[RMDB]
RNA sequence: GGGAACGACUCGAGUAGAGUCGAAAACGAAGGACUUUCGAGUCCUUCGACUUACCGAGAAAGAUCCUCGCUAUAAAUCUGGAACCCUUGGAAACAAGGGAAUGAACGGAAUCUUCGGAUUCCGUAACUACUGUUCUUGGUUCGCCAAGAACAGUAGAAAAGAAACAACAACAACAAC
Reactivity to DMS in 0.01 (KOAc 150mM, MgCl2 10mM, bicine 150mM(pH8.5), 24C), signal-to-noise 3, nucleotides 027 to 126: c160g000a030a020g020g000a010c000u000u000u010c140g010a020g010u010c000c010u010u000c000g020a030c030u000u000a050c030c000g010a020g010a090a090a100g000a090u000c010c000u000c180g020c150u010a110u000a050a070a100u000c070u010g010g010a100a130c000c010c000u000u000g000g020a160a080a160c010a010a000g010g020g010a040a010u010g020a150a030c010g010g000a000a000u000c000u000u010c170g010g000a010u000u000c000c000g010u000a020a080
Reactivity to 2A3 in 0.01 (KOAc 150mM, MgCl2 10mM, bicine 150mM(pH8.5), 24C), signal-to-noise 3, nucleotides 027 to 126: c060g010a030a010g000g020a000c020u050u090u140c260g040a040g000u010c010c000u020u000c000g010a000c000u010u010a030c010c020g010a000g000a020a180a000g010a020u030c010c020u060c050g040c040u080a080u090a300a130a060u100c080u100g090g090a120a090c000c000c000u000u000g010g020a050a070a000c000a000a000g010g000g040a000a020u040g010a020a010c010g000g020a000a010u000c000u020u090c170g080g000a010u000u010c000c000g000u020a020a020